[RMDB]
RNA sequence: GGGAACGACUCGAGUAGAGUCGAAAAUUGAAAUUGAACCGUCCUGUUAUCGAAAGAUAGGCAGAAGAUACGCAAUGUGUGACAGCAUGGGAAGUAAAGGCAGACCGUGGUUCCCUUGAGUAUCUUAAUUAGGGGGACGAGUUCGCUCGUCCCCCAAUCCAUUAGUUACGUUCGCGUAACUAAUGGAAAAAGAAACAACAACAACAAC
Reactivity to DMS in 0.01 (KOAc 150mM, MgCl2 10mM, bicine 150mM(pH8.5), 24C), signal-to-noise 3, nucleotides 027 to 156: u000u020g020a110a070a090u000u000g020a050a190c020c010g020u000c010c020u020g010u010u000a070u000c050g040a200a140a170g000a050u010a040g010g030c050a040g020a070a040g010a040u000a010c030g010c020a040a050u000g030u000g030u010g010a070c130a080g000c060a060u000g010g030g050a150a120g010u000a070a070a090g020g020c050a050g000a260c050c020g020u000g010g010u000u000c000c010c000u000u000g020a070g000u000a050u000c020u010u000a060a100u000u000a190g010g010g020g040g030a010c010g000a030g030u000u000c180g030c000u000c000g010u010c000c000c000c000c010a000a000
Reactivity to 2A3 in 0.01 (KOAc 150mM, MgCl2 10mM, bicine 150mM(pH8.5), 24C), signal-to-noise 2, nucleotides 027 to 156: u080u090g030a050a020a050u120u060g010a030a010c020c020g110u090c010c000u010g020u110u010a010u010c010g010a080a040a020g020a010u060a030g090g000c000a020g050a180a020g000a020u000a000c000g000c020a020a050u070g180u040g080u070g110a010c000a040g100c020a100u040g000g040g020a070a040g050u170a060a170a060g200g030c020a020g030a150c000c000g030u000g000g070u040u000c000c020c000u000u020g020a010g000u010a000u010c000u020u070a110a120u140u180a200g000g000g000g000g000a000c000g000a000g000u020u140c120g070c070u000c000g010u000c000c040c000c000c000a000a000